Description
The record gives the reactivity of an RNA of 177 nucleotides to 2A3 and DMS. 2A3 adducts were read by reverse transcription with SuperScript II with manganese.
[RMDB]
RNA sequence: GGGAACGACUCGAGUAGAGUCGAAAACUCAUGGCUAGGCGUACACGCACUAGGCGUCAUAGGUACUGUGGUACCAGUCCAUGGCGUACACUAGUCUAUGGAUCCUCUAGGUACCGGAUCGUGAUCGACUUACCACAGCCUUCGGGCUGUGGUAAGUAAAAGAAACAACAACAACAAC
Reactivity to 2A3 in 0.01 (KOAc 150mM, MgCl2 10mM, bicine 150mM(pH8.5), 24C), signal-to-noise 1, nucleotides 027 to 126: c030u030c000a020u080g040g000c000u010a000g050g000c010g140u100a060c200a050c180g090c020a010c100u050a170g300g020c000g000u000c010a010u070a230g000g020u110a040c000u010g090u110g130g000u050a010c030c000a000g000u010c030c000a000u000g000g000c000g000u000a030c040a000c000u070a040g020u000c050u090a000u000g040g000a050u050c030c020u060c170u090a070g000g000u000a020c000c000g020g050a070u090c040g040u000g050a130u050c050g010
Reactivity to DMS in 0.01 (KOAc 150mM, MgCl2 10mM, bicine 150mM(pH8.5), 24C), signal-to-noise 1, nucleotides 027 to 126: c130u010c020a050u010g000g000c010u000a030g020g010c110g010u000a070c190a110c080g000c080a060c120u000a130g030g020c010g000u000c020a040u000a120g010g000u000a010c030u000g010u010g030g000u020a010c060c040a070g000u010c000c040a040u000g000g030c020g010u000a000c110a220c030u000a020g000u000c010u000a030u000g030g000a070u000c030c050u000c300u010a040g000g020u000a010c040c020g000g010a090u000c050g010u010g000a090u000c020g030
The reactions ran in a buffer of 150 mM KOAc, 10 mM MgCl2 and 150 mM bicine (pH 8.5), at 24 C.